[RMDB]
RNA sequence: GGGAACGACUCGAGUAGAGUCGAAAAGAAUAACCCUACAGACCGUAGAACUCUCUCUUAGCUUCAAAAUAGACUAUUUCUCAGUAAUAUUCAUUCCCGUAGCACUAUUCGUCACAUGAUCAAUUAUAGAAUUCUCCAUAUGAUACAUACACUCAGAGUAAGUAAACAUGUUCGCAUGUUUACUUACAAAAGAAACAACAACAACAAC
Reactivity to DMS in 0.01 (KOAc 150mM, MgCl2 10mM, bicine 150mM(pH8.5), 24C), signal-to-noise 3, nucleotides 027 to 156: g020a170a110u000a120a130c010c010c010u000a270c040a110g010a100c070c050g020u010a090g010a090a080c040u000c000u000c050u010c050u010u000a080g000c030u010u010c080a070a060a100a120u000a150g000a070c010u020a070u000u010u000c020u000c030a090g030u000a050a090u000a110u000u000c040a150u000u000c010c010c020g030u000a090g000c030a100c060u000a090u000u000c020g030u000c010a030c030a050u010g010a070u000c040a020a060u000u000a130u010a190g000a050a070u000u000c020u000c000c020a040u000a050u000g000a090u000a060c050a070u000a080c070a060c060u000c030a120g020a300
Reactivity to 2A3 in 0.01 (KOAc 150mM, MgCl2 10mM, bicine 150mM(pH8.5), 24C), signal-to-noise 7, nucleotides 027 to 156: g040a030a050u080a050a060c010c000c010u020a040c030a050g060a040c010c050g040u080a020g040a120a040c010u020c000u000c000u000c020u070u100a020g020c000u100u070c070a060a090a070a100u080a040g050a050c040u040a070u050u110u010c070u020c020a030g050u080a050a080u040a100u170u090c050a040u040u020c010c000c030g010u020a010g030c030a030c050u070a100u140u130c070g040u040c050a040c020a120u070g030a060u060c050a070a060u110u080a070u080a110g060a080a070u080u030c020u010c030c010a030u040a030u170g010a010u040a050c030a010u100a040c030a020c070u080c050a010g030a000